[RMDB]
RNA sequence: GGGAACGACUCGAGUAGAGUCGAAAACAUCUUUCCUCCCUACACAGUGACUCCAGCUUGGGAGGGGCAGGGCUAGGCUGAGCCAGCACUCCCUGUGGUGGCUGCCUGCCACGUGCAGCUCUGGAGUAAAACCUGGAGAAGUUCGCUUCUCCAGGAAGCUCUACAGAUUCUUCGGAAUCUGUAGAGCAAAAGAAACAACAACAACAAC
Reactivity to 2A3 in 0.01 (KOAc 150mM, MgCl2 10mM, bicine 150mM(pH8.5), 24C), signal-to-noise 1, nucleotides 027 to 156: c000a040u100c070u080u190u070c000c010u050c000c010c000u130a100c130a030c020a190g110u080g070a040c000u000c000c010a000g010c010u010u040g010g000g000a010g000g000g030g030c010a020g000g040g000c020u220a000g050g000c010u070g090a020g080c020c000a050g050c000a000c030u150c020c130c040u050g000u010g080g130u010g000g000c010u030g000c000c000u010g080c030c010a120c020g100u060g000c000a060g010c000u000c010u080g000g000a000g000u030a000a060a000a000c000c010u000g000g030a010g010a000a010g010u000u140c270g060c150u000u010c000u010c000c000a000g000g000a000a000